Source: RMDB library M2PK50, as collected in RNAgym. Chemical mapping of a 177-nucleotide RNA with 2A3 and DMS. The reactions ran in a buffer of 150 mM KOAc, 10 mM MgCl2 and 150 mM bicine (pH 8.5), at 24 C. In probing experiments dimethyl sulfate is read out at A N1 and C N3, which are open when not base-paired.

[RMDB]
RNA sequence: GGGAACGACUCGAGUAGAGUCGAAAACUUCAAUGGUUCGCCAUUGAAGAAACAUGGUAAACGCUCACACCAUGAAAGAUCGAAAAACGAUCAAAGCGUAAAAAAGUAGUCAGUUCGCUGACUACAACGUAACUCCAGAGUUCGCUCUGGAGUUACGAAAAGAAACAACAACAACAAC
Reactivity to 2A3 in 0.01 (KOAc 150mM, MgCl2 10mM, bicine 150mM(pH8.5), 24C), signal-to-noise 1, nucleotides 027 to 126: c000u010u000c000a000a000u010g030g000u040u040c200g040c060c020a000u000u000g000a000a010g000a040a030a000c010a010u010g000g020u080a210a140a040c030g040c010u050c030a100c000a020c020c000a000u000g020a160a120a010g000a020u000c000g120a220a090a000a020a060c000g020a010u000c000a000a040a000g020c020g000u010a020a150a020a020a010a020g010u000a000g000u000c020a010g000u010u070c140g020c100u020g000a000c000u000a000c010a000a000
Reactivity to DMS in 0.01 (KOAc 150mM, MgCl2 10mM, bicine 150mM(pH8.5), 24C), signal-to-noise 1, nucleotides 027 to 126: c000u000u000c000a000a010u000g000g010u000u030c180g050c020c000a000u010u000g000a030a000g000a160a050a100c000a030u000g020g000u000a030a180a130c080g020c000u020c210a190c210a180c010c000a000u000g000a200a100a120g000a000u000c000g000a160a050a120a120a150c000g000a020u000c000a060a080a020g000c020g000u020a000a030a210a090a010a100g020u000a000g000u010c020a000g010u000u000c170g050c000u020g010a010c000u000a020c000a000a020